[RMDB]
RNA sequence: GGGAACGACUCGAGUAGAGUCGAAAACAACGCCACGGAAUCCAGAUAAGUUUAAAAGAAAACCCUGCUUCAAUACUCUCUUGGUUGGACAAAUUUCUUUAAAACCCAGCUACAAGAUCCCUGGUAACCGUAAGGAAAGAUUCGUCUUUCCUUACGGAAAAGAAACAACAACAACAAC
Reactivity to DMS in 0.01 (KOAc 150mM, MgCl2 10mM, bicine 150mM(pH8.5), 24C), signal-to-noise 2, nucleotides 027 to 126: c060a090a140c100g000c060c000a010c090g050g000a100a080u000c040c040a060g000a090u000a110a090g010u000u000u000a070a040a070a080g000a070a030a130a080c070c100c030u000g000c020u000u010c020a050a060u010a060c020u000c190u000c060u010u010g000g020u000u010g000g000a060c050a000a070a060u000u010u000c010u010u000u000a060a050a040a070c130c010c050a040g010c030u010a080c030a070a080g000a070u000c010c020c010u000g000g000u000a080a160
Reactivity to 2A3 in 0.01 (KOAc 150mM, MgCl2 10mM, bicine 150mM(pH8.5), 24C), signal-to-noise 2, nucleotides 027 to 126: c020a010a000c090g050c020c010a040c010g000g020a100a050u010c020c020a030g010a130u060a090a030g040u000u020u140a120a160a030a000g070a040a050a040a050c020c000c030u020g030c070u060u010c050a070a050u090a270c010u070c000u040c040u160u060g010g000u010u040g020g000a000c010a000a120a060u030u030u020c070u030u090u070a050a050a010a040c010c020c010a020g090c000u020a040c010a000a060g000a050u010c000c030c000u040g090g020u060a050a030